RNA sequence: GGGAACGACUCGAGUAGAGUCGAAAAUUGCACGCAAGCCACGCCAGGUUUUUACUCGUGAUGUGCUGCUCGAACAGGUGUGGGGCUAUCGUCACCCAGCGGAUACCCGCUUGGUUAACGUGCAUGAAGUAUAAAUGCGAUUCGUCGCAUUUAUACUAAAAGAAACAACAACAACAAC
Reactivity to DMS in 0.01 (KOAc 150mM, MgCl2 10mM, bicine 150mM(pH8.5), 24C), signal-to-noise 9, nucleotides 027 to 126: u000u000g010c010a020c030g020c090a080a240g010c010c010a020c080g010c050c100a120g010g010u000u010u000u000u000a080c030u000c220g010u000g000a040u000g010u000g000c090u010g000c020u000c030g010a100a090c080a190g020g010u010g020u000g020g000g000g000c040u000a070u000c020g010u000c030a030c010c040c090a040g030c040g010g000a090u000a050c060c000c270g010c010u000u000g010g010u000u000a100a120c010g010u000g000c010a020u000g000a130
Reactivity to 2A3 in 0.01 (KOAc 150mM, MgCl2 10mM, bicine 150mM(pH8.5), 24C), signal-to-noise 7, nucleotides 027 to 126: u040u010g010c000a000c000g010c030a050a030g030c010c010a010c020g010c030c040a060g040g030u020u020u010u050u090a060c040u030c030g020u020g020a060u040g050u050g050c130u080g020c010u020c040g130a220a040c040a120g220g040u120g070u070g180g020g010g000c000u020a030u100c010g030u010c010a010c020c030c000a000g000c010g030g010a020u060a100c010c000c000g000c000u000u000g000g000u020u030a060a010c000g000u010g000c000a010u040g040a030